RNA sequence: GGGAACGACUCGAGUAGAGUCGAAAACUAUCAGGUAACGCAGGAGAAGGAGCAACAGCCUGCGGAGGUUCGGCCGCCGCGGGCCAGGACCUCAUCAGCGUCCCCCGCAACACCUUUAUGACACUGCUUCAGACCAACCUGGACAACAAACCGCCGAGUAGAUAUCUCCUUUCGAGGAGAUAUCUACAAAAGAAACAACAACAACAAC
Reactivity to 2A3 in 0.01 (KOAc 150mM, MgCl2 10mM, bicine 150mM(pH8.5), 24C), signal-to-noise 2, nucleotides 027 to 156: c050u070a040u220c050a030g110g020u080a110a000c030g010c030a010g050g050a040g020a210a000g050g030a050g030c050a020a060c000a050g010c000c000u000g000c000g000g010a000g020g040u000u090c090g100g050c030c020g020c020c010g000c060g040g000g020c010c000a060g000g030a000c020c020u040c070a090u080c030a010g070c030g040u070c220c010c020c000c000g010c040a050a070c000a060c020c000u060u110u030a170u180g040a010c040a020c090u050g010c000u080u070c100a070g020a060c040c020a030a040c020c010u040g020g040a010c030a090a040c030a030a170a020c000c040g030c010c010g000a010